[RMDB]
RNA sequence: GGGAACGACUCGAGUAGAGUCGAAAAUCAUCCAAGUUCGCUUGGAUGAAACGGUACUGAAGCUAAAAACGAUCCGAGGCAACAGUACCAUAAUAGGAUCGACAGCCUGCAAAUUCGUUUGCAGGAACAAUGAACAUAGGUUCGCCUAUGUUCAUUGAAAAGAAACAACAACAACAAC
Reactivity to DMS in 0.01 (KOAc 150mM, MgCl2 10mM, bicine 150mM(pH8.5), 24C), signal-to-noise 9, nucleotides 027 to 126: u000c000a000u000c000c000a000a010g020u000u020c240g030c000u000u000g000g000a020u000g010a010a060a080c200g000g000u000a010c000u000g010a070a290g010c010u010a050a040a050a060a090c040g010a020u000c010c010g020a100g010g010c000a030a240c010a010g010u000a010c000c000a040u010a050a070u010a060g000g000a020u000c010g020a300c290a120g000c010c000u010g000c000a000a010a040u000u010c210g010u000u000u000g000c000a010g000g010a030a050
Reactivity to 2A3 in 0.01 (KOAc 150mM, MgCl2 10mM, bicine 150mM(pH8.5), 24C), signal-to-noise 9, nucleotides 027 to 126: u020c000a000u000c000c000a010a000g010u030u100c210g020c130u000u000g000g000a000u000g000a010a010a000c070g010g000u000a010c000u010g030a040a010g010c060u160a200a070a040a060a110c030g010a010u010c020c010g070a080g110g000c010a020a000c000a030g000u000a000c000c000a000u010a010a030u030a000g000g010a010u010c010g030a040c050a040g080c010c000u000g000c000a010a010a060u080u080c220g070u070u010u000g000c000a000g000g000a000a010
Chemical mapping of a 177-nucleotide RNA with DMS and 2A3.
The reactions ran in a buffer of 150 mM KOAc, 10 mM MgCl2 and 150 mM bicine (pH 8.5), at 24 C.
DMS adducts were read by reverse transcription with MarathonRT.